Record summary: Chemical mapping of a 177-nucleotide RNA with DMS. It was measured as part of the RMDB library TTRINS. The RNA was probed in 150 mM KOAc, 10 mM MgCl2 and 150 mM bicine (pH 8.5) at 24 C. Values are in units of 0.01, from 0 to 300, in steps of 10.
RNA sequence: GGGAACGACUCGAGUAGAGUCGAAAAGAUAUGGACACUACUACCAUCCAAGAAGUCCGAUAAGUCGGUCUCGGAAACGAGACUCGACUUUUGACGGACCACUGGAUGGUAGUAGUGUCCUAAGUCACAUGAGAGUAAGGUUCGCCUUACUCUCAUGAAAAGAAACAACAACAACAAC
Reactivity to DMS in 0.01 (KOAc 150mM, MgCl2 10mM, bicine 150mM(pH8.5), 24C), signal-to-noise 4, nucleotides 027 to 126: g010a050u000a300u010g000g010a020c000a010c000u010a000c000u000a000c000c000a010u000c000c000a000a060g000a300a270g010u000c000c000g020a220u000a010a000g020u000c000g000g000u000c000u000c000g000g000a140a080a240c010g000a010g010a000c000u020c020g020a010c000u000u000u010u000g010a240c130g000g000a020c000c010a260c170u000g000g010a010u000g000g000u000a010g000u000a000g010u010g000u000c000c000u000a000a030g000u010c050a230